[RMDB]
RNA sequence: GGGAACGACUCGAGUAGAGUCGAAAAACUAGCUGAUUACGAUCAGCUAGACAGAGCUGUGGAGUGUGACAAUGGUGUUUGUAUCAUCUGUCGUCAAACGCCAUUAUCACACUAAAUAGCCACGGAACGUCCAGUACACUUUCGAGUGUACUGGACGAAAAGAAACAACAACAACAAC
Reactivity to 2A3 in 0.01 (KOAc 150mM, MgCl2 10mM, bicine 150mM(pH8.5), 24C), signal-to-noise 4, nucleotides 027 to 126: a000c000u000a000g020c000u020g010a010u060u040a050c200g060a040u040c020a000g020c000u000a000g000a000c040a010g100a030g020c000u000g010u030g060g050a020g000u010g000u000g000a000c000a000a000u000g010g010u000g030u000u000u000g130u090a080u040c090a130u130c110u160g300u240c110g020u020c020a000a000a000c000g010c000c000a000u000u000a000u000c000a000c000a000c000u000a000a000a000u060a000g020c000c020a020c020g030g040a090a030
Reactivity to DMS in 0.01 (KOAc 150mM, MgCl2 10mM, bicine 150mM(pH8.5), 24C), signal-to-noise 2, nucleotides 027 to 126: a150c000u000a000g020c000u020g010a010u010u030a080c220g010a050u000c000a020g000c000u000a000g000a090c160a090g010a140g010c000u010g000u020g010g010a030g020u010g010u000g000a010c080a030a010u000g000g010u000g010u000u030u000g000u050a070u020c050a200u040c180u030g000u040c180g000u020c010a000a000a000c010g000c000c010a010u010u000a040u000c000a000c000a000c010u000a030a060a050u020a040g000c020c010a130c100g000g000a140a190